[RMDB]
RNA sequence: GGGAACGACUCGAGUAGAGUCGAAAAUUCAUACGCGCGCUCGCGGUCGGAUAGGCCGUGCCGGAUCACCGACAAUGCCCGCUGGUUGGCGUCGUCGCGGAAGCGCAGCGCCCACUGCCGGACCAUCUAACAAGCCUUAUUUCGAUAAGGCUUGUUAAAAAGAAACAACAACAACAAC
Reactivity to 2A3 in 0.01 (KOAc 150mM, MgCl2 10mM, bicine 150mM(pH8.5), 24C), signal-to-noise 1, nucleotides 027 to 126: u060u010c010a030u080a190c050g010c010g020c010g000c040u050c040g020c010g000g010u000c000g100g130a280u150a170g050g000c010c000g000u010g000c000c000g020g030a030u070c060a030c080c010g050a010c010a040a020u080g010c010c000c030g010c170u120g080g040u090u060g010g020c000g010u050c010g040u070c040g000c020g080g020a050a020g030c040g000c070a010g020c000g040c000c000c010a030c030u060g000c020c010g000g010a030c020c020a040u060c040
Reactivity to DMS in 0.01 (KOAc 150mM, MgCl2 10mM, bicine 150mM(pH8.5), 24C), signal-to-noise 5, nucleotides 027 to 126: u000u000c160a120u010a140c070g020c030g010c050g020c040u000c040g020c010g010g000u010c020g000g010a160u010a190g000g010c010c000g010u010g000c030c020g010g000a100u000c110a140c130c000g000a040c040a050a070u000g010c020c010c040g020c120u010g010g020u000u000g000g010c040g030u000c050g010u000c010g000c080g010g000a090a090g010c030g010c020a090g010c030g010c020c000c030a100c080u000g000c060c020g010g000a160c100c090a100u010c120